[RMDB]
RNA sequence: GGGAACGACUCGAGUAGAGUCGAAAAUUGAAAGACAAAAUAAUGAGUAGGAGUUAAUGAGAUGGAAAACCAAAAACAAGGCAAUGGCUUAAAAAUUGCAACAUGGGUAUUUAUUGUAUUAACAGUAAGAUCUAGUGUUUUUCGAAACACUAGAUCUAAAAGAAACAACAACAACAAC
Reactivity to DMS in 0.01 (KOAc 150mM, MgCl2 10mM, bicine 150mM(pH8.5), 24C), signal-to-noise 3, nucleotides 027 to 126: u010u020g010a090a100a120g000a100c120a060a050a070a060u040a090a030u010g000a090g000u020a060g000g010a120g010u020u010a050a050u010g020a130g020a010u020g020g010a010a060a030a080c030c020a020a030a110a070a100c170a090a110g020g000c010a020a000u000g020g020c200u030u090a030a050a020a090a040u010u000g010c040a020a040c130a070u030g000g000g020u000a050u020u000u010a040u030u000g010u010a080u020u000a030a040c030a040g010u040a050
Reactivity to 2A3 in 0.01 (KOAc 150mM, MgCl2 10mM, bicine 150mM(pH8.5), 24C), signal-to-noise 3, nucleotides 027 to 126: u140u060g050a020a070a000g060a030c150a020a160a010a120u250a030a120u200g050a000g070u200a060g030g150a030g010u010u060a040a000u120g010a030g050a140u000g060g050a040a040a020a010c050c000a120a000a010a030a110c020a050a030g020g010c000a000a050u020g020g000c010u050u130a020a040a070a100a000u040u000g020c020a010a000c010a130u040g000g000g000u010a010u030u040u010a030u040u060g070u080a000u030u070a040a000c010a010g100u080a160